[RMDB]
RNA sequence: GGGAACGACUCGAGUAGAGUCGAAAACACCUACAAUAAGGUGCUCCACUUCUAUAAUGUGAAGAGCUCAUUGGCCCAGCCACAGAUGAUGGUUGUGUCUGAUGUGGCUGACAUGUUUGUGCCACUGACUGCAAGAACGUUUCGACGUUCUUGCAGUAAAAGAAACAACAACAACAAC
Reactivity to DMS in 0.01 (KOAc 150mM, MgCl2 10mM, bicine 150mM(pH8.5), 24C), signal-to-noise 2, nucleotides 027 to 126: c070a040c020c000u000a100c140a090a070u020a170a020g010g000u000g020c060u010c010c040a130c070u000u000c100u000a120u020a140a090u010g020u000g000a050a030g010a130g040c040u000c040a020u000u000g030g010c000c050c000a020g000c010c000a000c010a030g010a220u010g000a010u010g010g010u000u000g010u000g000u000c020u020g000a190u010g010u000g010g010c000u030g000a090c170a120u000g000u000u010u000g010u000g000c050c010a040c220u010g000
Reactivity to 2A3 in 0.01 (KOAc 150mM, MgCl2 10mM, bicine 150mM(pH8.5), 24C), signal-to-noise 3, nucleotides 027 to 126: c030a030c010c020u050a060c100a100a110u300a130a030g110g000u030g020c020u000c000c000a070c020u080u070c090u100a300u120a300a170u200g070u030g090a100a110g020a030g090c030u030c060a090u010u100g020g000c020c020c000a000g000c020c000a010c000a010g060a020u030g010a050u000g070g300u260u160g120u130g020u100c010u000g030a020u000g010u010g010g030c000u000g000a000c020a050u130g140u090u130u080g160u170g000c040c060a050c030u040g040